[RMDB]
RNA sequence: GGGAACGACUCGAGUAGAGUCGAAAAGGACUCCGAGGGCCCCUUCCGAAGUGACGGGGGGGGGUCACUAGGAACACUGGGGUCCAGUGGAUCCGUGGGACUACCCUCUCCACCCUCCCAACACACUAACGUACUAUGUUCGCAUAGUACAAAAGAAACAACAACAACAAC
Reactivity to DMS in 0.01 (KOAc 150mM, MgCl2 10mM, bicine 150mM(pH8.5), 24C), signal-to-noise 8, nucleotides 027 to 129: g000g000a070c110u040c050c010g030a110g000g000g000c010c000c010c010u030u020c020c020g060a170a110g000u020g050a050c000g000g000g000g000g000g000g000g000g000u030c020a020c040u000a190g020g000a050a040c200a030c110u000g010g000g040g030u030c020c010a000g070u060g050g010a060u030c020c020g030u070g000g040g020a060c090u090a170c000c000c000u010c000u020c030c020a080c030c030c020u020c000c030c030a070a030c180a060c130a050c090u080a080a080c170
Reactivity to 2A3 in 0.01 (KOAc 150mM, MgCl2 10mM, bicine 150mM(pH8.5), 24C), signal-to-noise 9, nucleotides 027 to 129: g020g010a030c080u020c030c020g020a080g000g010g020c000c000c000c000u030u000c010c010g060a200a060g050u050g070a070c050g000g000g000g000g000g000g000g000g000u010c010a030c020u040a030g010g040a030a020c120a020c080u080g010g010g010g050u030c020c010a010g040u090g090g020a070u010c030c020g010u120g010g000g010a010c040u190a240c050c000c000u020c000u020c000c010a040c010c000c010u020c010c010c010a080a030c130a010c010a010c060u170a140a010c110

Structure probing data (DMS and 2A3) for a 170-nucleotide construct. Source: RMDB library 15KLIB, as collected in RNAgym. The 2A3 profile rests on 113,425 reads. For 2A3 the reverse transcriptase was SuperScript II with manganese. For DMS, 50,288 sequencing reads were counted. For DMS the reverse transcriptase was MarathonRT.